[RMDB]
This 177-nucleotide RNA was probed chemically with DMS and 2A3. The 2A3 profile rests on 990 reads. The reactions ran in a buffer of 150 mM KOAc, 10 mM MgCl2 and 150 mM bicine (pH 8.5), at 24 C. Source: RMDB libraries RFM100 and RFMREP, as collected in RNAgym. 2A3 adducts were read by reverse transcription with SuperScript II with manganese. DMS adducts were read by reverse transcription with MarathonRT.
RNA sequence: GGGAACGACUCGAGUAGAGUCGAAAAAUGAUAACACAGGUGUCCUAAGGUGAGCUCAAUGAGAACAGAAAUCUCAUGUAGAACAAAAGGGUAAAAGCUCACUUGAUUUUGAUUUUCAGUAUGAAUACAGCGGAAAUUAAUUCGUUAAUUUCCGCUGAAAAGAAACAACAACAACAAC
Reactivity to DMS in 0.01 (KOAc 150mM, MgCl2 10mM, bicine 150mM(pH8.5), 24C), signal-to-noise 3, nucleotides 027 to 126: a110u000g030a020u020a130a100c130a130c080a060g000g020u000g010u000c000c010u030a070a060g000g030u010g030a010g020c000u000c030a220a020u000g000a010g000a010a080c100a160g030a050a100a050u000c010u000c010a000u000g010u020a090g000a130a140c160a030a090a120a210g000g010g020u030a050a070a100a080g000c010u010c000a000c000u000u020g010a130u010u000u010u000g010a100u010u020u000u000c040a040g000u030a050u000g010a090a040u040a160
Reactivity to 2A3 in 0.01 (KOAc 150mM, MgCl2 10mM, bicine 150mM(pH8.5), 24C), signal-to-noise 2, nucleotides 027 to 126: a000u090g060a020u100a160a000c030a010c000a040g030g050u030g070u120c030c000u020a070a000g000g000u020g020a020g050c030u040c020a080a000u000g000a000g000a010a010c130a060g170a150a200a070u000c000u000c000a020u020g080u120a070g000a030a000c010a060a190a040a010g070g030g050u120a080a110a000a000g000c000u000c040a000c000u000u000g000a020u000u110u020u040g030a020u000u010u120u000c000a000g020u030a150u210g070a160a000u070a080